[RMDB]
RNA sequence: GGGAACGACUCGAGUAGAGUCGAAAAUUCCAUUUGAGUAUCCUGAAAACGGGCUUUUCAGCAUGGAACGUACAUAUUAAAUAGUAGGAGUGGAUAGUGGCCCGUAUAGCAGGCAUUAACAUUCCUGAAAACGUGAAAAGGUUCGCCUUUUCACGAACCUUGGUCUUGAGUUCGCUCAAGACCAAGGAAAAGAAACAACAACAACAAC
Reactivity to 2A3 in 0.01 (KOAc 150mM, MgCl2 10mM, bicine 150mM(pH8.5), 24C), signal-to-noise 1, nucleotides 027 to 156: u030u000c000c000a030u050u060u010g080a090g010u160a090u090c000c000u010g040a030a000a050a000c030g010g000g000c000u050u040u110u090c070a030g010c000a030u030g020g000a090a020c020g150u140a050c000a070u270a070u190u300a150a120a140u160a070g090u010a020g020g000a000g000u000g000g000a150u090a100g010u020g030g060c030c000c030g000u030a040u080a100g030c010a000g000g000c000a000u000u030a010a010c010a000u000u030c000c000u000g060a120a030a010a010c020g010u000g000a020a000a000a000g040g000u060u050c110g150c060c000u010u000u000u000c010a000c000g020a020a020